Overview
Chemical mapping of a 170-nucleotide RNA with 2A3 and DMS. 2A3 adducts were read by reverse transcription with SuperScript II with manganese. It was measured as part of the RMDB library 15KLIB.

[RMDB]
RNA sequence: GGGAACGACUCGAGUAGAGUCGAAAAGGGCGCUCCGUCUUCGUUCUUCUUCCUUCUCAACAGUCCGACGAUGUUUCCCAGCCAGGGGUUUUCAUCCUCAAGUUUCUUGAUCUUCUUGUUGGAUCGCAUACUUUCCGCUUCGGCGGAAAGAAAAGAAACAACAACAACAAC
Reactivity to 2A3 in 0.01 (KOAc 150mM, MgCl2 10mM, bicine 150mM(pH8.5), 24C), signal-to-noise 1, nucleotides 027 to 129: g020g030g000c040g000c040u030c050c010g030u000c070u000u000c070g080u010u060c000u000u000c000u030u040c000c000u180u090c000u000c030a020a270c000a000g070u060c090c000g020a020c000g000a010u070g000u000u040u000c080c040c030a030g000c000c060a030g000g000g000g000u040u030u100u010c030a040u020c000c000u000c040a000a000g060u010u010u000c010u000u090g030a110u000c010u140u010c000u010u060g040u030u050g040g000a010u000c000g000c030a040u070a210
Reactivity to DMS in 0.01 (KOAc 150mM, MgCl2 10mM, bicine 150mM(pH8.5), 24C), signal-to-noise 1, nucleotides 027 to 129: g090g020g010c080g030c000u010c030c060g000u010c000u020u020c110g030u000u020c030u000u060c000u060u000c080c000u060u000c020u030c020a000a000c190a130g050u020c070c000g060a160c080g040a090u030g010u000u000u000c070c000c010a000g070c090c070a140g040g060g020g010u000u020u000u060c070a120u020c000c000u020c090a090a170g000u030u000u000c000u060u020g010a070u000c060u000u000c000u000u000g030u120u000g010g040a110u000c020g040c000a140u030a080